[RMDB]
RNA sequence: GGGAACGACUCGAGUAGAGUCGAAAAGAUAUGGAGCGUCCAGCUUUUGACGAUCGAUCGGAAACGAUCGUUUGCAAUCGAUAAGCUGGCGCUCCUAAGUCAAAACUGCCCGGUUCGCCGGGCAGAACUAUGUGACAAGCUUCGGCUUGUCACAUAGAAAAGAAACAACAACAACAAC
Reactivity to 2A3 in 0.01 (KOAc 150mM, MgCl2 10mM, bicine 150mM(pH8.5), 24C), signal-to-noise 1, nucleotides 027 to 126: g010a010u020a000u040g030g010a010g000c040g120u240c070c000a000g020c020u020u090u220u300g050a020c000g010a010u010c010g020a010u000c000g000g000a010a000a000c000g020a010u020c010g000u000u000u000g050c070a240a170u100c110g260a250u070a300a010g000c000u000g000g000c000g020c000u000c000c000u000a010a010g000u000c010a000a000a020a070c000u020g000c020c010c080g000g080u070u030c300g000c030c000g180g050g010c000a000g030a000a000
Reactivity to DMS in 0.01 (KOAc 150mM, MgCl2 10mM, bicine 150mM(pH8.5), 24C), signal-to-noise 1, nucleotides 027 to 126: g010a030u000a080u020g000g000a010g030c020g000u030c010c010a010g000c000u000u000u010u030g030a080c020g020a010u010c000g010a000u010c020g020g010a020a000a020c010g030a010u000c010g020u010u000u010g010c150a090a090u000c160g000a100u000a000a010g000c000u000g000g000c020g050c000u000c000c000u000a010a020g000u000c020a130a060a110a280c030u000g020c000c000c010g020g010u000u000c160g020c020c000g010g020g010c020a000g010a000a110
The data come from the RNA Mapping Database (RMDB), library TTRDEL. The record gives the reactivity of an RNA of 177 nucleotides to 2A3 and DMS. For DMS the reverse transcriptase was MarathonRT. Conditions: 150 mM KOAc, 10 mM MgCl2 and 150 mM bicine (pH 8.5), 24 C.